[RMDB]
RNA sequence: GGGAACGACUCGAGUAGAGUCGAAAACACAACAAGGAAAGGACAAAAACUUCAUUGGGAAGCUUCUCCGCUUUCAAUUGCAACUAGUUUUAAUGUUGUGGCGGCUGGUGACAAAAACAAAACAAAACAACUCCAACCACUUCGGUGGUUGGAGUUGAAAAGAAACAACAACAACAAC
Reactivity to 2A3 in 0.01 (KOAc 150mM, MgCl2 10mM, bicine 150mM(pH8.5), 24C), signal-to-noise 1, nucleotides 027 to 126: c060a000c000a000a200c020a010a000g030g030a180a030a080g180g030a070c020a000a150a090a000a000c000u230u030c130a010u010u010g050g000g090a000a000g000c060u180u020c030u240c230c030g020c000u000u020u080c010a000a070u020u110g030c090a130a100c080u010a010g000u000u000u000u000a000a060u010g000u040u010g000u000g040g000c000g000g000c080u120g030g060u090g080a000c010a000a040a000a150a000c140a030a190a000a000c000a000a090a000a120
The data come from the RNA Mapping Database (RMDB), library OK1LIB. The record gives the reactivity of an RNA of 177 nucleotides to 2A3. The RNA was probed in 150 mM KOAc, 10 mM MgCl2 and 150 mM bicine (pH 8.5) at 24 C. Reactivities are rounded to 0.1 and cut off at 0 and 3.